[RMDB]
An RNA of 207 nucleotides, treated with DMS and 2A3 and read out base by base.
The RNA was probed in 150 mM KOAc, 10 mM MgCl2 and 150 mM bicine (pH 8.5) at 24 C.
Reactivities are given for positions 27 through 156.
RNA sequence: GGGAACGACUCGAGUAGAGUCGAAAAGCCGUAAACGCAUCCGGCGAAUAAGAUGCAUGAGCGAAAGCUCUAAGAUAAUUGGCCGUUUUGUAGGGGCCGUAGACCCUACUUAUUAAUGCUCGAGACGUGUGGAGCGAUCAUCACGCAAGACUAACAAAUCAUGACUACUGUUCGCAGUAGUCAUGAUAAAAGAAACAACAACAACAAC
Reactivity to DMS in 0.01 (KOAc 150mM, MgCl2 10mM, bicine 150mM(pH8.5), 24C), signal-to-noise 2, nucleotides 027 to 156: g000c000c020g000u010a040a260a030c080g010c000a010u000c000c000g030g010c040g030a070a280u000a070a050g000a050u000g000c060a180u020g030a040g000c020g000a170a190a300g070c000u000c000u010a130a180g020a080u000a130a140u000u000g030g020c000c010g020u000u000u010u000g020u000a050g020g000g070g020c020c110g070u000a100g040a040c000c010c000u000a000c000u010u010a060u010u000a080a110u000g000c010u000c080g040a100g000a040c000g040u000g000u020g020g000a130g030c060g030a070u020c000a060u000c010a080c060g020c000a040a060g000a300c090u010a080a000c060a030a100
Reactivity to 2A3 in 0.01 (KOAc 150mM, MgCl2 10mM, bicine 150mM(pH8.5), 24C), signal-to-noise 2, nucleotides 027 to 156: g010c000c000g010u030a040a180a050c080g000c010a000u010c000c000g010g010c000g000a010a090u130a060a070g010a000u040g030c080a040u090g010a000g010c050g030a120a000a000g000c010u020c020u030a060a040g060a090u090a100a050u070u090g030g000c000c000g050u080u060u020u020g010u020a000g050g000g000g000c000c020g000u020a010g050a070c000c010c000u000a000c000u020u030a020u020u110a080a110u050g010c020u000c060g030a030g040a060c020g000u030g030u100g020g060a070g060c010g040a040u020c040a030u050c060a020c000g030c000a000a060g060a070c080u170a120a000c080a020a100